[RMDB]
RNA sequence: GGGAACGACUCGAGUAGAGUCGAAAAAGGCACUCCAUACCCUACUCCGACUCAAUACGUCCCCGUCGUACCGAAUGGUAACAUAUCUCUCCAAAUAUCUGAGCUUGGGUAUACGGGGAAACCCAACAAAAGCAAUUGUGGUUCGCCACAAUUGCAAGUACACUAGGAUCUUCGGAUCCUAGUGUACAAAAGAAACAACAACAACAAC
Reactivity to 2A3 in 0.01 (KOAc 150mM, MgCl2 10mM, bicine 150mM(pH8.5), 24C), signal-to-noise 3, nucleotides 027 to 156: a010g050g020c040a020c060u070c040c000a070u090a100c010c000c000u050a070c040u020c040c010g080a030c020u020c100a110a070u080a110c050g060u040c000c000c000c010g010u040c020g000u010a040c010c000g070a080a090u190g030g020u120a120a030c060a070u150a100u060c050u020c010u020c070c030a080a210a110u100a180u100c120u160g030a020g100c040u030u070g050g000g000u010a030u000a030c030g000g000g000g000a000a020a000c020c010c010a020a030c050a010a100a000a020g000c000a000a000u000u000g000u010g010g060u020u020c190g020c050c000a000c000a000a000u000u000g000c000a000a010